[RMDB]
This 207-nucleotide RNA was probed chemically with DMS and 2A3. DMS adducts were read by reverse transcription with MarathonRT. It was measured as part of the RMDB library OK3TST. The DMS profile rests on 3,910 reads.
RNA sequence: GGGAACGACUCGAGUAGAGUCGAAAAGGCUGCGUUCUGGAAGUAGGGCCCGAGGUCUGUCGGUGGGGUGGCUUCUGCAGCGUGUGGCCGUGUGACCCCACGGAGGUGACCUCCCAGAGCGGCUGAGGUUGAGAACCCAUUGAGCAGCUAGGCCCCAAAAUUAUCCCUCAUUCGUGAGGGAUAAUUUAAAAGAAACAACAACAACAAC
Reactivity to DMS in 0.01 (KOAc 150mM, MgCl2 10mM, bicine 150mM(pH8.5), 24C), signal-to-noise 1, nucleotides 027 to 156: g010g030c000u000g000c020g010u000u000c060u000g010g000a070a070g010u000a090g030g010g080c020c020c050g030a030g020g000u000c030u000g030u000c030g000g050u010g000g010g040g050u000g010g020c020u000u000c060u000g020c030a170g000c150g010u010g040u030g020g020c020c020g020u020g030u000g010a100c000c000c000c000a030c040g000g020a050g040g010u010g020a040c010c010u010c010c020c020a080g020a120g000c030g010g000c050u020g020a070g010g000u000u000g000a150g010a170a120c030c000c020a200u010u010g010a160g050c030a060g000c020u000a090g010g000c000c000c000c020a050
Reactivity to 2A3 in 0.01 (KOAc 150mM, MgCl2 10mM, bicine 150mM(pH8.5), 24C), signal-to-noise 2, nucleotides 027 to 156: g040g010c020u060g000c050g010u060u020c020u000g020g040a040a070g030u170a160g010g030g000c040c000c030g030a010g010g010u020c030u050g060u060c070g090g020u040g000g000g000g010u080g040g020c030u120u060c050u150g080c080a070g030c090g080u150g030u090g010g000c000c000g040u070g050u050g200a040c000c000c030c010a020c040g080g030a100g050g070u030g000a010c000c000u010c020c000c000a010g000a010g000c030g020g000c070u100g020a060g010g050u080u100g040a070g030a090a050c010c010c010a010u050u150g070a040g030c020a020g000c030u090a040g010g060c000c000c010c020a020